Structure probing data (2A3 and DMS) for a 177-nucleotide construct. The data come from the RNA Mapping Database (RMDB), library OK2TST. 2A3 adducts were read by reverse transcription with SuperScript II with manganese. Reactivities are given for positions 27 through 126. For DMS the reverse transcriptase was MarathonRT.

[RMDB]
RNA sequence: GGGAACGACUCGAGUAGAGUCGAAAAUGUGAAGGUUAAUAACCGGCUCGGAGUAAGAAGUGCGGCAUCGCCAACUUAUGUCGCUCCGAUUCCGAUCAUAGCGCCAUGCUUCUUUUGUGGUGAAUAGUCCUAAAUGCAUAUUCGUAUGCAUUUAGGAAAAAGAAACAACAACAACAAC
Reactivity to 2A3 in 0.01 (KOAc 150mM, MgCl2 10mM, bicine 150mM(pH8.5), 24C), signal-to-noise 8, nucleotides 027 to 126: u170g030u030g070a090a060g040g000u040u050a090a040u110a150a060c020c000g020g010c010u000c000g010g010a010g010u050a110a100g060a100a000g040u060g080c120g040g010c040a150u130c100g040c040c010a030a030c030u080u060a040u110g090u080c070g000c010u000c000c010g010a020u090u020c010c010g020a040u060c030a080u080a050g090c020g000c020c010a020u030g020c050u110u110c030u050u180u090u140g040u010g010g000u020g050a140a120u050a120g060
Reactivity to DMS in 0.01 (KOAc 150mM, MgCl2 10mM, bicine 150mM(pH8.5), 24C), signal-to-noise 9, nucleotides 027 to 126: u010g020u000g010a120a140g010g010u000u000a090a100u010a120a100c030c010g000g010c300u000c000g000g000a010g010u000a040a140g000a040a040g010u000g010c130g000g010c120a130u010c210g010c030c030a060a030c030u000u000a020u010g010u010c270g000c000u000c010c010g000a090u000u010c010c010g000a060u010c090a040u000a090g010c080g000c010c010a030u000g000c100u000u000c050u000u000u000u000g020u000g000g010u000g010a080a080u010a100g000